[RMDB]
RNA sequence: GGGAACGACUCGAGUAGAGUCGAAAAUGGAUGCUGAUUCUAUCCUGCACAUGAAGCAACCAAGGAUCAAAGCGGUUAAGAGAAUUCACUCUGGUGACAGGCAGGGUCUGACCAGAGGUCUGCCUGACCCAUGGGGUACGUUCGCGUACCCCAUGGGAAAAGAAACAACAACAACAAC
Reactivity to 2A3 in 0.01 (KOAc 150mM, MgCl2 10mM, bicine 150mM(pH8.5), 24C), signal-to-noise 2, nucleotides 027 to 126: u080g020g000a000u040g000c060u080g010a080u080u000c020u000a060u060c000c020u020g020c100a100c010a140u160g110a070a030g060c020a000a000c000c030a040a050g030g000a000u040c040a040a110a020g040c050g040g040u140u120a080a000g040a010g010a090a070u120u080c030a040c110u020c030u030g000g020u040g050a070c050a060g000g050c010a040g050g000g040u020c020u040g100a080c010c000a010g010a010g070g010u000c030u040g020c010c010u050g070a080
Reactivity to DMS in 0.01 (KOAc 150mM, MgCl2 10mM, bicine 150mM(pH8.5), 24C), signal-to-noise 2, nucleotides 027 to 126: u000g000g000a030u010g000c070u000g010a100u000u000c060u000a120u000c000c020u000g000c050a060c090a120u020g020a130a060g010c070a070a080c030c030a110a060g000g000a040u000c030a090a110a150g010c080g000g000u010u000a060a070g010a100g000a070a080u010u020c060a070c030u000c020u000g010g000u000g020a080c030a030g000g000c010a040g000g010g010u000c020u000g030a120c060c110a070g020a030g020g000u000c020u000g000c050c000u000g000a140

An RNA of 177 nucleotides, treated with 2A3 and DMS and read out base by base. Source: RMDB library OK2TST, as collected in RNAgym.